An RNA of 207 nucleotides, treated with 2A3 and DMS and read out base by base. It was measured as part of the RMDB library OK3TST.
RNA sequence: GGGAACGACUCGAGUAGAGUCGAAAAAUUUUGCUCAACUGUAGGCUGAAGUAAGUGUUCUAAUCAUGUUAAGGUAGGCUAGGCUAAGCUAGAAUGUUCGGUAAGUUAGAUGUAUUAAGUGCAUUUUUGAGAUGAUAUUUAUUUUCCACUUAUGAUGCAGCUAAUAUGCCUUCGGGCAUAUUAGCUGAAAAGAAACAACAACAACAAC
Reactivity to 2A3 in 0.01 (KOAc 150mM, MgCl2 10mM, bicine 150mM(pH8.5), 24C), signal-to-noise 2, nucleotides 027 to 156: a010u100u080u020u130g100c050u070c120a070a030c130u060g000u130a040g100g000c020u070g030a090a000g010u070a060a090g070u010g020u050u140c030u120a110a040u110c010a000u020g080u070u100a060a030g040g000u020a020g000g060c020u000a020g030g000c000u050a000a090g000c000u030a030g000a130a000u070g050u100u050c060g050g020u080a020a010g000u020u110a010g000a010u050g010u110a030u140u090a120a020g040u020g040c030a030u000u030u040u040u080g050a050g000a020u040g000a030u030a100u140u110u040a080u000u090u030u000c020c030a010c060u060u070a030u210g070a060u260g030
Reactivity to DMS in 0.01 (KOAc 150mM, MgCl2 10mM, bicine 150mM(pH8.5), 24C), signal-to-noise 1, nucleotides 027 to 156: a220u000u000u000u000g020c000u000c020a040a020c020u000g020u010a070g090g000c030u030g000a030a060g020u020a040a060g000u000g000u000u000c030u000a050a090u000c020a040u000g000u010u010a100a110g020g020u000a070g030g010c010u020a080g000g000c040u000a050a100g000c000u010a100g000a080a140u010g000u020u000c010g020g030u000a040a090g020u000u000a090g000a080u000g020u000a040u000u000a070a030g050u000g000c050a100u000u000u000u000u000g000a180g000a130u000g020a090u000a060u000u000u000a090u020u000u000u000c020c040a040c080u010u000a060u000g020a110u000g020